[RMDB]
RNA sequence: GGGAACGACUCGAGUAGAGUCGAAAAGGCUAACGUUACUAUAUCUGUGUUCGUUAGCCGGUUAAGCAACACAGAUAUAGUAAGCUUAACCACGACGGUGGACAUGCGAAAGCAUGUCCAUCGUCGAGCAGGAAGUAGGCUUCGGCCUACUUCCUGCAAAAGAAACAACAACAACAAC
Reactivity to 2A3 in 0.01 (KOAc 150mM, MgCl2 10mM, bicine 150mM(pH8.5), 24C), signal-to-noise 2, nucleotides 027 to 126: g030g000c070u080a100a040c120g190u110u010a020c010u010a010u000a020u030c010u020g030u000g010u000u010c070g010u060u070a060g030c010c010g000g010u030u050a020a000g030c010a010a000c000a000c000a000g020a030u000a000u010a030g010u030a010a020g000c010u020u060a030a020c000c020a010c040g010a000c000g010g010u000g000g000a000c000a000u010g010c010g060a110a000a040g000c000a000u000g000u000c000c000a000u000c000g000u000c000g000a000
An RNA of 177 nucleotides, treated with 2A3 and read out base by base.